RNA sequence: GGGAACGACUCGAGUAGAGUCGAAAACGAGCGAUUCGACGGCCAUCGUCCGCGCGACGAUGCCGUCGCCGCCCGUCACGCCGACAUGCAGAUGCUCGGGCCGGAUGCCGACCGUCACGCGCUCGCACGUCAGGUAAAUAUUCGUAUUUACCUGACGAAAAGAAACAACAACAACAAC
Reactivity to DMS in 0.01 (KOAc 150mM, MgCl2 10mM, bicine 150mM(pH8.5), 24C), signal-to-noise 9, nucleotides 027 to 126: c010g000a030g010c010g020a130u010u000c040g010a020c010g010g010c150c070a020u000c010g010u000c010c030g030c300g020c110g000a010c000g010a030u000g000c010c010g000u000c000g010c300c030g000c010c010c010g010u000c080a120c170g010c050c020g000a090c110a070u000g010c110a110g000a080u010g010c060u000c030g010g010g000c040c030g010g000a080u010g010c040c060g000a070c040c020g010u000c030a060c080g010c050g010c020u000c030g010c090a190
Reactivity to 2A3 in 0.01 (KOAc 150mM, MgCl2 10mM, bicine 150mM(pH8.5), 24C), signal-to-noise 9, nucleotides 027 to 126: c010g000a010g020c010g050a080u140u170c030g000a020c000g010g030c160c050a010u010c000g000u000c020c030g300c040g040c210g110a000c000g010a010u020g010c000c010g010u000c000g000c000c000g000c010c010c000g020u030c030a030c100g070c030c020g070a080c040a070u200g030c040a050g100a230u100g020c030u020c010g010g010g000c020c040g060g010a050u140g070c020c030g060a070c020c010g050u060c030a030c080g030c000g000c020u030c020g030c020a050
Conditions: 150 mM KOAc, 10 mM MgCl2 and 150 mM bicine (pH 8.5), 24 C. Structure probing data (DMS and 2A3) for a 177-nucleotide construct. Source: RMDB library OK2TRN, as collected in RNAgym. Reactivities are given for positions 27 through 126. For DMS the reverse transcriptase was MarathonRT.